This 177-nucleotide RNA was probed chemically with 2A3 and DMS. 2A3 adducts were read by reverse transcription with SuperScript II with manganese.
RNA sequence: GGGAACGACUCGAGUAGAGUCGAAAACAUGAUCUGCAUGAAAUAACCUUUUGAAUAAAUGAGUUCAAAUUUCUUCAAUAUCUAAGCGACUAGAGGAAAUUGCAAUUCGAUGAAAUCGAUUCGUCGCGAUCAUGAUUUUAUUCGUAAAAUCAUGAUCAAAAGAAACAACAACAACAAC
Reactivity to 2A3 in 0.01 (KOAc 150mM, MgCl2 10mM, bicine 150mM(pH8.5), 24C), signal-to-noise 9, nucleotides 027 to 126: c030a030u060g030a110u090c060u190g040c030a020u040g060a100a110a060u120a090a100c010c000u060u110u070u090g070a050a030u110a080a080a080u180g060a060g080u060u040c040a040a040a080u030u030u010c010u020u020c020a060a070u050a120u200c050u100a120a050g040c020g040a020c010u040a020g000a010g030g040a020a030a040u030u060g020c050a040a110u070u040c020g020a020u060g090a050a050a090u060c020g030a030u090u050c050g000u000c000g000c030
Reactivity to DMS in 0.01 (KOAc 150mM, MgCl2 10mM, bicine 150mM(pH8.5), 24C), signal-to-noise 6, nucleotides 027 to 126: c080a090u010g000a080u030c080u010g010c010a030u000g000a060a090a100u030a110a100c050c050u000u010u020u020g000a060a050u020a060a050a060u030g000a140g000u000u010c040a070a030a050u000u010u000c020u000u000c010a020a110u050a200u000c040u010a130a180g030c160g000a040c050u000a250g010a010g010g000a030a010a000u010u010g010c130a050a090u010u000c020g010a040u000g000a080a070a140u010c020g000a060u010u000c060g000u000c040g020c150
Background: Values cover nucleotides 27 to 126. DMS adducts were read by reverse transcription with MarathonRT. Conditions: 150 mM KOAc, 10 mM MgCl2 and 150 mM bicine (pH 8.5), 24 C.